[RMDB]
RNA sequence: GGGAACGACUCGAGUAGAGUCGAAAAAUGCAGAUGAAGCUGGCAAGCGAUAUAGAUCCUCAGAAGGGGUUUGUGCUCGAGCACGGCGGCUACAGCAAAUCCCAGCAAAAGAACAACAUGAAGGCCAGAAUAGGACAUGUUUCGACAUGUCCUAUUCAAAAGAAACAACAACAACAAC
Reactivity to 2A3 in 0.01 (KOAc 150mM, MgCl2 10mM, bicine 150mM(pH8.5), 24C), signal-to-noise 3, nucleotides 027 to 126: a000u050g000c010a010g050a130u050g070a110a010g000c020u040g050g060c050a090a040g040c020g020a000u010a000u010a100g060a040u020c010c020u040c030a060g100a150a090g030g010g000g020u020u020u030g030u030g020c040u040c090g020a020g000c040a050c080g060g010c020g010g010c020u060a060c040a010g010c010a040a020a010u000c000c000c000a000g000c010a010a050a030a030g040a040a010c020a000a010c010a050u140g050a090a020g110g000c030c030a010
Reactivity to DMS in 0.01 (KOAc 150mM, MgCl2 10mM, bicine 150mM(pH8.5), 24C), signal-to-noise 4, nucleotides 027 to 126: a090u010g000c010a070g000a160u010g020a120a110g000c040u010g020g000c060a100a120g010c030g010a060u000a070u000a090g010a060u010c020c020u000c050a110g020a140a260g020g010g000g000u000u000u000g010u000g010c130u000c090g000a120g010c040a070c090g020g020c060g000g010c010u000a120c050a080g000c010a010a020a050u000c000c010c000a120g000c130a060a040a060a040g010a050a050c050a040a060c080a080u000g010a070a080g020g010c060c100a110
The record gives the reactivity of an RNA of 177 nucleotides to 2A3 and DMS. It was measured as part of the RMDB library OK2TST. For 2A3 the reverse transcriptase was SuperScript II with manganese. The 2A3 profile rests on 3,240 reads.